An RNA of 207 nucleotides, treated with 2A3 and read out base by base. It was measured as part of the RMDB library M2RFPK.
RNA sequence: GGGAACGACUCGAGUAGAGUCGAAAAGAAGGGUGAAAGCCCUUGAGACUGUAGUGGAAAUUAUAAAUAAGAAGAGUUCUGAGUUGCUUAAGCAGAACUAAAAUAAAAAGACAAGCAUUAUUACAAACAUGGCGAGGUAAGUUCGCUUACCUCGCAACAUACCAGACCUCUUCGGAGGUCUGGUAUGAAAAGAAACAACAACAACAAC
Reactivity to 2A3 in 0.01 (KOAc 150mM, MgCl2 10mM, bicine 150mM(pH8.5), 24C), signal-to-noise 1, nucleotides 027 to 156: g010a010a000g000g000g000u020g030a070a030a000g000c010c010c000u000u000g030a030g000a000c000u010g050u130a060g070u150g070g030a020a080a060u060u200a190u140a260a120a030u180a100a040g030a020a020g020a000g060u000u010c000u010g020a060g010u080u110g050c010u090u020a120a070g000c010a000g010a000a000c040u000a020a010a010a010u120a020a090a020a000a000g060a000c010a030a000g020c000a000u020u110a020u090u110a200c090a040a070a010c050a110u090g110g000c020g000a000g000g000u010a000a000g000u010u080c190g030c050u000u000a000c000c000u020c000g000c000a000a000